[RMDB]
Structure probing data (DMS and 2A3) for a 207-nucleotide construct.
For 2A3, 5,446 sequencing reads were counted.
It was measured as part of the RMDB library OK3TST.
Values cover nucleotides 27 to 156.
DMS adducts were read by reverse transcription with MarathonRT.

RNA sequence: GGGAACGACUCGAGUAGAGUCGAAAAUGCUAUUUGCUAUCACUGAAAUAGGAGUGAAAACUGAUGAGAAUGUAAAAUGAAUUGCUUUGUACUUUUAAAUCGUGUUUCACAUUUAUCUCAUUUUCUCUUCAUCAUAGACAGCUGUGAGCACAGUCACCUCCUGUCUAAUGUUCGCAUUAGACAGGAGAAAAGAAACAACAACAACAAC
Reactivity to DMS in 0.01 (KOAc 150mM, MgCl2 10mM, bicine 150mM(pH8.5), 24C), signal-to-noise 2, nucleotides 027 to 156: u000g010c010u000a130u020u000u000g020c010u000a050u010c040a150c140u010g010a030a110a130u010a090g000g010a050g010u000g000a040a020a020a060c080u000g000a050u000g010a120g000a010a020u010g030u010a010a010a020a030u020g000a080a080u010u010g020c040u000u000u000g080u000a110c110u020u010u010u000a050a100a050u000c080g070u000g000u000u000u000c030a020c010a050u010u000u010a040u010c020u000c000a070u000u000u000u000c000u010c000u000u000c040a110u000c050a080u000a180g000a000c040a020g030c030u000g040u000g020a040g000c030a070c030a070g020u000c030a060c080
Reactivity to 2A3 in 0.01 (KOAc 150mM, MgCl2 10mM, bicine 150mM(pH8.5), 24C), signal-to-noise 8, nucleotides 027 to 156: u080g010c020u050a100u130u130u140g010c020u040a040u160c030a050c070u060g040a060a080a070u130a090g010g020a020g020u030g010a020a030a030a040c110u050g010a040u180g010a060g030a050a030u020g010u120a040a040a020a050u090g050a040a070u090u060g060c040u130u100u160g090u190a160c040u060u200u120u260a060a140a090u110c070g000u040g050u080u090u070c040a010c000a010u060u090u120a300u020c010u000c000a020u010u010u040u000c040u000c000u020u040c010a040u030c010a040u060a100g060a090c040a020g040c020u040g030u080g120a010g000c010a020c030a040g030u070c010a030c070